This 207-nucleotide RNA was probed chemically with DMS and 2A3. The DMS profile rests on 10,725 reads.
RNA sequence: GGGAACGACUCGAGUAGAGUCGAAAAGCAGUCCUUCGGGACUGCAAAAAAGCGUACUACUGUCGAGGCAUUGUGUAGCAAUUUCCCAAAUAGGAAAUUGCGCAGAUACAAUGAACUACCUCACAGUAUCGCAAAAACUCCUGCUUCGGCAGGAGAACUAUACUAUGAAGUUCGCUUCAUAGUAUAGAAAAGAAACAACAACAACAAC
Reactivity to DMS in 0.01 (KOAc 150mM, MgCl2 10mM, bicine 150mM(pH8.5), 24C), signal-to-noise 3, nucleotides 027 to 156: g020c010a000g020u000c010c010u000u010c300g080g060g020a000c000u010g000c010a000a010a060a050a080a110g020c020g030u000a100c140u000a040c010u000g020u010c110g020a020g020g000c000a030u010u000g030u010g040u000a250g010c000a010a020u000u000u000c000c000c010a040a150a200u010a050g000g000a010a010a010u000u000g020c000g010c100a070g020a150u000a040c030a030a070u000g010a100a130c050u000a130c000c000u000c010a050c010a020g010u000a000u010c030g000c010a040a050a070a100a090c020u000c000c010u000g040c010u000u000c290g040g030c000a010g020g000a000g010a000a050
Reactivity to 2A3 in 0.01 (KOAc 150mM, MgCl2 10mM, bicine 150mM(pH8.5), 24C), signal-to-noise 4, nucleotides 027 to 156: g000c000a000g000u000c010c010u020u040c080g040g000g010a020c010u020g000c020a010a010a000a000a000a010g030c050g050u110a080c060u010a000c000u030g020u090c090g010a000g000g010c000a010u010u000g010u010g030u060a040g000c000a010a010u010u010u030c040c010c010a200a290a070u280a100g000g000a000a010a010u000u010g000c020g000c010a000g010a080u090a040c010a020a000u020g010a040a020c070u130a080c110c000u000c000a000c000a000g000u000a010u090c000g000c010a000a010a010a040a110c000u000c000c000u000g010c000u030u040c150g140g000c000a000g000g000a000g000a000a000